[RMDB]
RNA sequence: GGGAACGACUCGAGUAGAGUCGAAAACGAGAUGAGUUCGCUCAUCUCGAAAGAACCGCGGGCGUGACUCGGUCAGAGCAUGUCAGGCGCUGCGGUCACGAAAAAGUGGUGUGUUCGCACACCACAACAACUACCUUCCGUUCGCGGAAGGUAGUUGAAAAGAAACAACAACAACAAC
Reactivity to 2A3 in 0.01 (KOAc 150mM, MgCl2 10mM, bicine 150mM(pH8.5), 24C), signal-to-noise 1, nucleotides 027 to 126: c010g000a000g000a000u010g000a000g040u050u100c160g070c050u000c010a010u000c010u000c000g010a010a010a020g030a030a010c010c010g000c030g020g030g000c120g080u010g010a040c010u040c110g070g100u190c180a070g040a030g170c070a080u150g020u020c010a020g140g030c150g000c110u040g000c010g010g000u010c030a060c060g120a110a040a030a030a040g000u010g000g000u000g000u010g000u010u060c180g000c050a010c000a000c000c000a000c000a000a030
Reactivity to DMS in 0.01 (KOAc 150mM, MgCl2 10mM, bicine 150mM(pH8.5), 24C), signal-to-noise 3, nucleotides 027 to 126: c010g000a020g020a000u000g010a010g010u010u000c300g030c000u010c000a000u010c000u000c010g000a020a070a090g010a140a060c020c020g010c010g000g000g040c000g000u000g000a030c000u000c140g000g020u000c200a090g010a100g010c130a040u000g000u000c040a030g000g000c010g000c010u000g010c010g010g010u010c050a040c170g000a040a060a040a100a090g010u010g000g020u010g030u000g000u010u020c190g000c000a020c000a010c000c000a000c010a040a080

This 177-nucleotide RNA was probed chemically with 2A3 and DMS.
2A3 adducts were read by reverse transcription with SuperScript II with manganese.
For DMS, 2,244 sequencing reads were counted.
The RNA was probed in 150 mM KOAc, 10 mM MgCl2 and 150 mM bicine (pH 8.5) at 24 C.